Background
Structure probing data (DMS and 2A3) for a 177-nucleotide construct. Source: RMDB library RFMREP, as collected in RNAgym. For DMS the reverse transcriptase was MarathonRT. The DMS profile rests on 6,052 reads.
RNA sequence: GGGAACGACUCGAGUAGAGUCGAAAACUGCUAGAACCUCCAAACAAGCUCUCAAGGUCCAUUUGUAGGAGAACGUAGGGUAGUCAAGCUUCCAAGACUCCAGACACAUCCAAAUGAGGCGCUGCAUACUGUAGUAAUAGUUCGCUAUUACUACAGUAAAAGAAACAACAACAACAAC
Reactivity to DMS in 0.01 (KOAc 150mM, MgCl2 10mM, bicine 150mM(pH8.5), 24C), signal-to-noise 6, nucleotides 027 to 126: c040u000g010c060u010a080g010a120a100c050c010u000c030c060a060a080a060c120a100a120g010c040u000c010u000c080a100a120g010g030u000c030c050a080u000u000u010g020u000a110g010g000a060g000a070a070c110g010u010a060g020g010g010u000a030g000u000c040a070a120g010c120u000u010c070c060a060a170g000a060c020u000c020c010a080g000a070c050a070c080a090u000c030c040a010a070a100u010g010a100g020g010c100g010c040u010g000c100a150u000
Reactivity to 2A3 in 0.01 (KOAc 150mM, MgCl2 10mM, bicine 150mM(pH8.5), 24C), signal-to-noise 5, nucleotides 027 to 126: c010u040g010c040u050a060g040a110a050c010c010u000c020c030a050a080a080c030a080a050g020c000u010c000u010c090a030a050g060g010u020c030c020a050u050u060u110g070u090a050g010g040a040g010a060a010c030g030u070a040g000g020g070u020a020g030u050c040a070a040g030c020u100u010c030c000a000a040g020a030c010u000c010c000a010g030a030c020a010c000a060u010c030c010a020a070a070u120g020a060g040g000c050g030c060u040g000c000a030u020